Chemical mapping of a 207-nucleotide RNA with 2A3 and DMS. For DMS, 4,255 sequencing reads were counted. For DMS the reverse transcriptase was MarathonRT. 2A3 adducts were read by reverse transcription with SuperScript II with manganese. For 2A3, 2,441 sequencing reads were counted. The data come from the RNA Mapping Database (RMDB), library OK3TST. High 2A3 reactivity points to a flexible backbone, as in loops and unpaired stretches.
RNA sequence: GGGAACGACUCGAGUAGAGUCGAAAAAAAGCUAAUGCAGGCAAGGGAGAUGAUAAAAUAUAUGUCCCUCGUAUCGGCUAUGGAGCAACAAGAACAUAAGGCGAUGAAAAAGAAUAAGGGCCCAGCGAUCCUAACGAGUCAUCUCACUAACAUGGCCACUCACAAAACAAUUCGUUGUUUUGUGAGUAAAAGAAACAACAACAACAAC
Reactivity to 2A3 in 0.01 (KOAc 150mM, MgCl2 10mM, bicine 150mM(pH8.5), 24C), signal-to-noise 3, nucleotides 027 to 156: a000a000a000g040c030u070a080a040u100g010c010a030g050g010c020a030a060g020g000g000a040g000a050u040g040a020u170a120a130a090a010u190a020u050a040u110g110u070c010c030c000u000c020g040u060a060u070c020g010g000c010u000a030u070g020g020a040g030c030a040a060c020a040a060g050a060a030c020a030u100a050a060g060g020c020g030a020u080g090a100a040a020a020a050g050a030a010u110a070a100g030g010g000c010c020c010a000g030c020g030a050u040c010c010u020a030a020c030g000a000g020u000c000a030u000c010u010c010a040c080u060a030a010c010a090u080g030g020c020c000
Reactivity to DMS in 0.01 (KOAc 150mM, MgCl2 10mM, bicine 150mM(pH8.5), 24C), signal-to-noise 2, nucleotides 027 to 156: a040a040a100g010c010u000a090a070u000g020c060a090g020g020c020a080a070g020g010g000a050g000a080u010g010a150u000a040a050a060a120u010a120u000a090u010g010u000c000c010c010u000c050g010u000a050u000c140g020g030c020u010a080u000g010g000a150g040c050a060a080c120a030a150g020a090a080c030a050u010a050a040g020g000c020g010a090u010g010a030a100a090a050a040g020a110a080u000a110a090g030g020g020c020c010c010a060g030c050g030a090u000c040c020u010a050a050c040g020a140g000u000c020a140u010c020u000c020a050c140u000a020a060c060a050u000g000g000c000c070
Values cover nucleotides 27 to 156. Conditions: 150 mM KOAc, 10 mM MgCl2 and 150 mM bicine (pH 8.5), 24 C.